About this RNA
The data come from the RNA Mapping Database (RMDB), library M2PK90. Structure probing data (DMS and 2A3) for a 177-nucleotide construct. For DMS the reverse transcriptase was MarathonRT.
RNA sequence: GGGAACGACUCGAGUAGAGUCGAAAAAUGAUUCGUAGUGUAAGACGAUCGACAGUCAUCGCUUGCCAGCAGGACCACCAAAGGAAUUCGCUUCGGUAACUACUCGAGAUCCCAAGCGAUAAAACAACUAAUUGGUUCAAUUCGUUGAACCAAUUAGAAAAGAAACAACAACAACAAC
Reactivity to DMS in 0.01 (KOAc 150mM, MgCl2 10mM, bicine 150mM(pH8.5), 24C), signal-to-noise 5, nucleotides 027 to 126: a070u010g010a050u000u000c030g030u010a090g020u010g010u020a070a080g000a060c040g010a060u000c060g010a110c160a070g000u000c060a060u010c030g020c040u000u000g010c020c050a100g030c060a140g010g020a070c080c070a040c030c050a020a080a090g010g000a060a050u000u010c090g000c110u000u000c060g010g010u000a060a130c010u000a010c010u000c000g010a020g000a100u000c010c010c000a090a070g000c130g010a080u020a030a040a070a080c140a040a150
Reactivity to 2A3 in 0.01 (KOAc 150mM, MgCl2 10mM, bicine 150mM(pH8.5), 24C), signal-to-noise 5, nucleotides 027 to 126: a000u090g010a020u040u050c040g040u070a080g040u040g030u250a070a060g100a210c010g030a020u030c050g110a100c070a050g060u130c020a020u020c040g000c040u020u050g020c020c020a020g040c020a020g020g040a040c020c020a040c040c030a160a060a040g100g010a030a070u100u030c030g000c050u030u010c020g000g030u040a150a130c000u010a000c000u000c010g010a000g000a020u020c000c000c010a010a000g070c030g030a030u120a160a160a010a020c060a020a020